Conditions: 150 mM KOAc, 10 mM MgCl2 and 150 mM bicine (pH 8.5), 24 C. This 177-nucleotide RNA was probed chemically with DMS and 2A3. For 2A3 the reverse transcriptase was SuperScript II with manganese.
RNA sequence: GGGAACGACUCGAGUAGAGUCGAAAACAGUGAGAGUCCCACACACGACUGGACUUCCAUAUCGAGCCACAGCUAUCAACGAAUUUGCUGGCAAGAUGUAGGCAGUUCAGUUGUGCGUUUAUGGAGAUCACUAAUGAUAAUUCGUUAUCAUUAGUGAAAAAGAAACAACAACAACAAC
Reactivity to DMS in 0.01 (KOAc 150mM, MgCl2 10mM, bicine 150mM(pH8.5), 24C), signal-to-noise 9, nucleotides 027 to 126: c090a100g010u010g000a080g010a170g010u000c010c000c020a200c020a050c010a010c010g010a010c010u000g010g000a000c000u000u000c000c000a050u000a010u000c000g010a300g000c020c020a070c180a060g010c060u010a140u010c150a100a150c300g010a090a060u000u010u010g010c080u000g010g000c010a030a240g000a010u000g010u000a110g020g000c050a020g000u000u000c010a010g000u000u000g010u000g010c030g010u000u000u010a090u020g010g010a160g010a180
Reactivity to 2A3 in 0.01 (KOAc 150mM, MgCl2 10mM, bicine 150mM(pH8.5), 24C), signal-to-noise 9, nucleotides 027 to 126: c060a020g060u080g120a110g010a020g110u020c000c000c000a000c000a000c000a000c010g010a000c000u000g000g000a000c000u010u000c010c000a010u010a000u060c010g000a000g010c010c010a100c050a070g010c030u060a040u150c060a120a240c120g130a190a100u110u100u150g010c030u010g000g000c000a010a010g000a010u010g000u050a170g000g000c010a000g000u000u000c000a000g000u000u000g000u000g000c000g000u030u090u050a270u180g150g010a100g010a080

Source: RMDB libraries RFM100 and RFMREP, as collected in RNAgym. Values are in units of 0.01, from 0 to 300, in steps of 10.